Structure probing data (DMS and 2A3) for a 177-nucleotide construct. DMS adducts were read by reverse transcription with MarathonRT. For DMS, 6,786 sequencing reads were counted. Conditions: 150 mM KOAc, 10 mM MgCl2 and 150 mM bicine (pH 8.5), 24 C. The data come from the RNA Mapping Database (RMDB), library TTRDEL.
RNA sequence: GGGAACGACUCGAGUAGAGUCGAAAAGAUAUGGAUCGUUACAGACAUGUCCUGUCGGAAACGACGGGACAACAGCUGUUGCGAUCCUAAGUCAAAACAAGCCUCUUGGUUCGCCAAGAGGCUUGAACUAUGCCAAUAUGUUCGCAUAUUGGCAUAGAAAAGAAACAACAACAACAAC
Reactivity to DMS in 0.01 (KOAc 150mM, MgCl2 10mM, bicine 150mM(pH8.5), 24C), signal-to-noise 5, nucleotides 027 to 126: g010a030u000a180u010g000g000a010u000c000g000u000u000a010c000a000g010a190c110a180u000g000u000c000c000u000g000u000c000g010g000a050a030a070c000g010a010c000g010g000g000a000c000a000a040c300a120g000c010u000g000u000u000g000c000g010a010u000c000c000u000a000a050g000u000c010a140a090a110a210c010a000a010g000c000c000u010c000u000u000g000g000u000u010c220g020c010c000a010a000g010a000g000g000c000u000u000g000a040a190
Reactivity to 2A3 in 0.01 (KOAc 150mM, MgCl2 10mM, bicine 150mM(pH8.5), 24C), signal-to-noise 2, nucleotides 027 to 126: g000a000u030a020u060g000g000a000u000c010g000u010u040a020c020a030g300a200c090a240u040g000u020c000c020u000g000u000c010g010g010a000a010a010c000g000a010c000g000g050g010a010c010a010a000c030a020g070c010u000g000u010u020g000c010g000a010u000c000c000u000a000a000g010u010c000a010a010a130a230c000a010a000g030c030c000u000c010u000u020g070g010u080u160c290g050c090c000a000a000g000a000g000g000c010u000u000g000a000a000